[RMDB]
RNA sequence: GGGAACGACUCGAGUAGAGUCGAAAAUCGCAAAACCGCGGCAAGUGGAGUUCGCGAGAGGAGGCUGGGUUUUGGCUUCCUUAAGCAAUCGGUCACCGAGAAGGUGUGGUCGUUACCGUGAAAUUCCGUGACAAAAUAACGUUCGCGUUAUUUUGAACGGAUGCAGCAUAUUCGUAUGCUGCAUCCGAAAAGAAACAACAACAACAAC
Reactivity to 2A3 in 0.01 (KOAc 150mM, MgCl2 10mM, bicine 150mM(pH8.5), 24C), signal-to-noise 3, nucleotides 027 to 156: u040c020g000c030a030a010a000a130c040c020g030c030g080g000c090a170a000g070u100g040g010a050g040u110u090c030g010c010g010a050g000a000g040g010a010g000g000c000u060g000g180g190u070u110u160u190g050g010c000u000u020c000c000u020u000a050a010g020c000a020a050u070c020g020g000u020c000a010c020c040g040a070g080a220a090g170g020u160g010u030g060g000u020c030g040u050u060a080c030c030g010u030g070a010a010a090u060u010c020c030g020u080g050a040c010a000a000a000a000u000a000a010c000g020u020u050c180g000c000g090u010u000a000u000u010u000u010g020a070a020
Reactivity to DMS in 0.01 (KOAc 150mM, MgCl2 10mM, bicine 150mM(pH8.5), 24C), signal-to-noise 1, nucleotides 027 to 156: u000c040g010c030a050a090a080a170c110c000g000c050g040g140c040a070a110g010u000g000g020a120g000u000u000c090g010c000g010a300g050a020g010g010a020g020g000c040u000g000g020g000u000u000u000u020g000g000c010u000u010c000c010u000u000a050a300g030c020a070a040u000c020g020g000u010c010a170c060c060g000a160g030a030a150g040g010u010g010u000g000g000u000c000g000u000u000a010c050c000g030u000g000a070a100a160u000u000c010c020g000u010g000a170c000a010a010a020a000u000a020a010c010g000u000u000c180g000c080g020u000u000a010u000u010u000u010g010a040a130
The record gives the reactivity of an RNA of 207 nucleotides to 2A3 and DMS. For DMS the reverse transcriptase was MarathonRT. Source: RMDB library M2RFPK, as collected in RNAgym.